[RMDB]
Structure probing data (2A3 and DMS) for a 177-nucleotide construct. It was measured as part of the RMDB library TTRDES. DMS adducts were read by reverse transcription with MarathonRT. For 2A3 the reverse transcriptase was SuperScript II with manganese. The RNA was probed in 150 mM KOAc, 10 mM MgCl2 and 150 mM bicine (pH 8.5) at 24 C.
RNA sequence: GGGAACGACUCGAGUAGAGUCGAAAAGAUAUGGAUCCUACGGCUCAACAGCCACACGGGUCGGAAACGACCUGUGGACAUGAGCGGUAGGAUCCUAAGUCAAAACACGAACCUUCGGGUUCGUGAAGAUUUGGGAAUAGUUCGCUAUUCCCAAAUCAAAAGAAACAACAACAACAAC
Reactivity to 2A3 in 0.01 (KOAc 150mM, MgCl2 10mM, bicine 150mM(pH8.5), 24C), signal-to-noise 4, nucleotides 027 to 126: g010a010u030a020u070g000g000a010u000c000c010u020a030c010g300g000c010u010c040a300a180c050a220g050c080c000a000c000a020c070g180g000g000u030c000g000g000a010a010a000c030g000a010c000c010u020g000u010g000g010a010c100a300u300g000a010g010c190g060g000u000a000g030g000a000u000c000c000u000a000a000g000u000c000a030a040a050a090c020a010c000g010a000a010c000c000u050u090c300g160g000g000u000u000c010g000u000g000a020a030
Reactivity to DMS in 0.01 (KOAc 150mM, MgCl2 10mM, bicine 150mM(pH8.5), 24C), signal-to-noise 4, nucleotides 027 to 126: g010a050u000a300u010g000g000a000u000c010c000u000a010c020g010g020c000u010c010a090a100c260a210g020c020c010a100c010a010c140g020g000g010u010c010g030g000a070a050a160c010g010a010c000c000u010g010u000g000g010a030c050a260u020g000a000g010c020g010g030u000a000g020g000a010u000c000c000u000a020a050g010u000c030a100a050a130a290c010a010c000g000a000a010c000c000u000u020c210g020g010g020u010u000c000g020u000g000a050a090